Conditions: 150 mM KOAc, 10 mM MgCl2 and 150 mM bicine (pH 8.5), 24 C.
This 207-nucleotide RNA was probed chemically with 2A3 and DMS.
2A3 adducts were read by reverse transcription with SuperScript II with manganese.
For DMS the reverse transcriptase was MarathonRT.
RNA sequence: GGGAACGACUCGAGUAGAGUCGAAAAACUAAUCCAAAGCAUGUAUAGGAGAACAGGUUUUUAACUAUUUUUAGGCAGAUAAAAAAUAGUAUUUGACAGUCUAACACUAACUGAACAAUAAGUGUUAAAAAGUCGUCUCUGUUCGCAGAGACGACAAUCUUUACAUAAGCUUCGGCUUAUGUAAAGAAAAAGAAACAACAACAACAAC
Reactivity to 2A3 in 0.01 (KOAc 150mM, MgCl2 10mM, bicine 150mM(pH8.5), 24C), signal-to-noise 4, nucleotides 027 to 156: a000c040u060a070a020u030c020c010a050a030a040g030c030a050u060g030u130a100u090a130g020g030a050g020a090a050c100a160g040g020u050u020u000u010u060a030a010c000u010a020u020u020u010u000u010a020g080g030c040a030g060a150u130a070a060a020a000a000a000u000a000g020u020a100u080u050u090g040a020c000a000g000u000c000u000a000a000c010a000c000u010a020a000c000u020g110a050a010c010a020a000u020a030a000g000u000g010u010u010a030a090a020a010a000g000u000c000g010u000c000u000c000u000g080u080u030c150g000c060a000g000a000g000a000c000g000a000c000a000a000
Reactivity to DMS in 0.01 (KOAc 150mM, MgCl2 10mM, bicine 150mM(pH8.5), 24C), signal-to-noise 1, nucleotides 027 to 156: a170c070u000a070a090u020c030c000a060a060a300g030c050a080u020g020u000a120u000a130g020g000a120g010a130a110c070a160g000g010u000u000u040u000u000a040a100c010u020a030u000u000u000u000u000a040g020g000c030a170g010a150u030a000a000a060a010a020a020u000a020g000u000a100u000u000u020g030a250c040a010g000u010c010u000a030a010c010a040c000u010a030a130c040u000g000a080a130c290a090a060u000a010a010g000u010g040u000u000a060a060a080a080a120g000u000c020g020u000c000u000c000u000g000u000u010c270g050c020a010g000a020g010a000c020g010a000c000a020a010